[RMDB]
RNA sequence: GGGAACGACUCGAGUAGAGUCGAAAAUGCAGUUGGAUGAGGUGGUCACCAUUGACGAUGUCCAGGUUGCAAGGAUGGAGCCCCCCAAACAGAAAUUAUCAAUGCUCAUACGAAGGAAACUCGCUGGGCUCUCCCUGAAGGAAGAGAGUGAGAAACACAUGGAGGGAGUAUUCGUACUCCCUCCAUGAAAAGAAACAACAACAACAAC
Reactivity to DMS in 0.01 (KOAc 150mM, MgCl2 10mM, bicine 150mM(pH8.5), 24C), signal-to-noise 1, nucleotides 027 to 156: u000g000c030a160g040u000u030g060g000a060u010g010a150g030g000u010g030g000u000c010a080c090c000a090u000u060g030a170c060g000a060u030g040u000c030c080a100g030g000u010u000g020c050a000a170g010g000a040u000g010g000a170g050c010c010c000c010c020c000a030a070a180c110a090g020a050a080a120u000u030a090u010c010a040a110u020g010c090u000c050a070u000a150c110g010a080a130g000g000a120a060a100c090u000c040g050c130u000g000g030g020c000u000c020u010c050c010c010u030g040a060a080g020g000a070a010g000a080g000a150g040u010g000a080g000a060a080a030c080a090